RNA sequence: GGGAACGACUCGAGUAGAGUCGAAAAUAGUCGGAAUUCGUUCCGACUAGAUGAACGCUGCAAGCGGCAGCGCGCUCAAAAGAGCACGCAAAAGCAACGCAUAAAUGAACUUAUUCGUAAGUUCAAACUGUAUAGGUGUCUUCGGACACCUAUACAGAAAAGAAACAACAACAACAAC
Reactivity to DMS in 0.01 (KOAc 150mM, MgCl2 10mM, bicine 150mM(pH8.5), 24C), signal-to-noise 2, nucleotides 027 to 126: u000a020g010u000c000g000g000a030a020u000u010c220g090u000u020c000c000g000a030c000u000a020g000a060u000g000a190a120c140g000c110u000g000c040a130a230g030c030g010g000c290a180g000c000g000c010g020c000u000c000a100a070a090a080g010a050g000c010a010c000g010c020a030a060a290a160g020c040a030a090c180g020c050a070u000a080a070a100u010g000a000a000c000u010u000a020u010u010c170g000u010a010a000g000u020u000c000a070a060a110
Reactivity to 2A3 in 0.01 (KOAc 150mM, MgCl2 10mM, bicine 150mM(pH8.5), 24C), signal-to-noise 2, nucleotides 027 to 126: u020a000g000u000c000g000g020a030a000u040u040c170g030u100u040c010c010g000a000c010u000a000g000a000u110g070a030a010c060g000c070u020g010c040a050a160g020c040g050g030c060a020g000c000g000c010g030c000u000c000a220a300a050a110g020a000g020c020a000c090g010c030a050a050a020a070g030c030a040a050c100g020c090a060u180a190a160a080u060g000a000a010c000u010u030a010u100u090c160g060u050a030a010g010u010u030c000a050a050a000

The record gives the reactivity of an RNA of 177 nucleotides to DMS and 2A3. Source: RMDB library M2PK50, as collected in RNAgym. Conditions: 150 mM KOAc, 10 mM MgCl2 and 150 mM bicine (pH 8.5), 24 C. For 2A3 the reverse transcriptase was SuperScript II with manganese. For DMS the reverse transcriptase was MarathonRT. Reactivities are given for positions 27 through 126. The 2A3 profile rests on 1,514 reads. In probing experiments dimethyl sulfate is read out at A N1 and C N3, which are open when not base-paired.